Background
This 177-nucleotide RNA was probed chemically with DMS and 2A3. Reactivities are given for positions 27 through 126. Conditions: 150 mM KOAc, 10 mM MgCl2 and 150 mM bicine (pH 8.5), 24 C.

RNA sequence: GGGAACGACUCGAGUAGAGUCGAAAAGCCUCUAGCGUUUGCAAAACGCUGUUUGCGCAAUGAUCUGGAUUUAGGGCAAGUAGGUCCGAAAUCCAGAUCAACAUUUCGGACAACCGCGCUAAUUAAAUCUGAUUAGUUCGUUCGCGAACUAAUCAGAAAAAGAAACAACAACAACAAC
Reactivity to DMS in 0.01 (KOAc 150mM, MgCl2 10mM, bicine 150mM(pH8.5), 24C), signal-to-noise 2, nucleotides 027 to 126: g000c000c000u000c250u000a020g000c000g040u010u010u000g050c300a080a100a030a040c030g030c010u010g010u000u000u000g010c020g000c080a090a040u010g000a030u020c000u000g000g010a020u000u000u000a220g050g030g020c010a180a100g020u020a150g060g020u010c000c000g000a100a030a000u000c010c000a010g010a000u000c000a020a080c140a120u000u010u010c080g000g010a100c060a060a080c160c150g000c020g010c030u000a030a040u000u000a060a100a170
Reactivity to 2A3 in 0.01 (KOAc 150mM, MgCl2 10mM, bicine 150mM(pH8.5), 24C), signal-to-noise 1, nucleotides 027 to 126: g000c000c000u010c070u090a000g010c000g000u000u030u120g260c060a030a040a000a000c010g000c010u020g060u030u190u120g020c030g000c000a060a190u090g000a000u010c000u000g000g030a020u030u020u070a080g020g000g030c000a000a150g200u160a110g300g040u040c000c000g000a010a000a000u050c010c000a000g000a000u000c000a000a000c000a010u030u070u090c060g070g010a010c030a080a010c140c010g040c010g000c060u020a000a100u180u090a150a090a040